[RMDB]
RNA sequence: GGGAACGACUCGAGUAGAGUCGAAAAUUAAAGUGGUGCAAAAUACGCGCCCUGCAAAAUAAGAUAUUAACCGACGUCAACGCGUCGGUUAUUUUUUUGCCUACAACGUAUGGUUCGCCAUACGUUGGGUUAUUCCCUGUUUCGACAGGGAAUAACCAAAAGAAACAACAACAACAAC
Reactivity to DMS in 0.01 (KOAc 150mM, MgCl2 10mM, bicine 150mM(pH8.5), 24C), signal-to-noise 2, nucleotides 027 to 126: u000u010a050a090a020g010u000g060g020u000g010c040a090a110a180a100u010a100c170g000c000g000c010c000c000u000g000c240a020a020a020a050u000a070a060g010a120u000a070u000u000a010a020c000c000g020a020c000g020u000c120a100a140c300g000c000g030u000c000g000g000u000u000a010u000u000u000u000u000u000u000g020c010c120u000a240c020a000a000c000g000u000a000u000g000g000u000u020c260g010c000c000a020u000a000c010g000u000u000g010
Reactivity to 2A3 in 0.01 (KOAc 150mM, MgCl2 10mM, bicine 150mM(pH8.5), 24C), signal-to-noise 2, nucleotides 027 to 126: u150u070a110a040a000g130u180g090g000u010g010c030a080a140a130a300u130a160c070g000c000g000c000c000c010u040g000c000a030a030a020a040u110a070a070g050a110u130a030u230u050a010a000c000c000g010a010c000g030u080c100a140a020c070g000c010g020u000c000g000g010u000u010a000u000u000u000u000u000u000u000g020c010c000u100a040c010a000a000c000g000u000a010u010g000g040u040u050c260g000c080c000a020u000a010c010g000u000u000g000
Chemical mapping of a 177-nucleotide RNA with DMS and 2A3. DMS adducts were read by reverse transcription with MarathonRT. The data come from the RNA Mapping Database (RMDB), library RFMREP. Conditions: 150 mM KOAc, 10 mM MgCl2 and 150 mM bicine (pH 8.5), 24 C. The DMS profile rests on 1,323 reads.